RNA sequence: GGGAACGACUCGAGUAGAGUCGAAAAGAUAUGGAAUAACGCUCAACAGCAGGUCAUUCGGAAACGAAUGCCUGACAUGAGCCAAUUCCUAAGUCAAAACUAUGUUAAACUUCGGUUUAACAUAGAAUCCUAUUCUCAGGUUCGCCUGAGAAUAGGAAAAAGAAACAACAACAACAAC
Reactivity to DMS in 0.01 (KOAc 150mM, MgCl2 10mM, bicine 150mM(pH8.5), 24C), signal-to-noise 3, nucleotides 027 to 126: g010a030u000a140u000g000g000a000a000u000a120a180c300g000c000u010c000a050a100c270a130g020c000a020g000g010u010c030a010u000u000c000g020g000a030a020a070c000g000a020a000u000g000c000c000u000g010a020c100a100u000g000a000g000c000c050a240a050u000u000c000c000u000a010a110g010u010c010a100a080a090a250c000u000a000u000g000u000u000a000a000a000c000u010u010c210g030g010u000u000u000a000a000c000a000u010a000g000a080a100
Reactivity to 2A3 in 0.01 (KOAc 150mM, MgCl2 10mM, bicine 150mM(pH8.5), 24C), signal-to-noise 2, nucleotides 027 to 126: g010a010u050a000u050g000g000a000a000u030a110a020c060g010c010u000c020a120a300c080a300g000c000a000g040g040u300c030a010u000u010c010g030g000a020a000a010c020g010a010a000u010g010c000c000u000g050a030c060a200u090g010a000g000c000c000a000a020u000u010c000c000u000a020a020g000u000c020a000a000a140a210c010u010a010u020g010u000u000a020a010a020c020u050u090c280g070g000u010u020u010a000a000c000a000u000a000g000a010a030
Source: RMDB library TTRDEL, as collected in RNAgym.
Chemical mapping of a 177-nucleotide RNA with DMS and 2A3.
2A3 adducts were read by reverse transcription with SuperScript II with manganese.
The reactions ran in a buffer of 150 mM KOAc, 10 mM MgCl2 and 150 mM bicine (pH 8.5), at 24 C.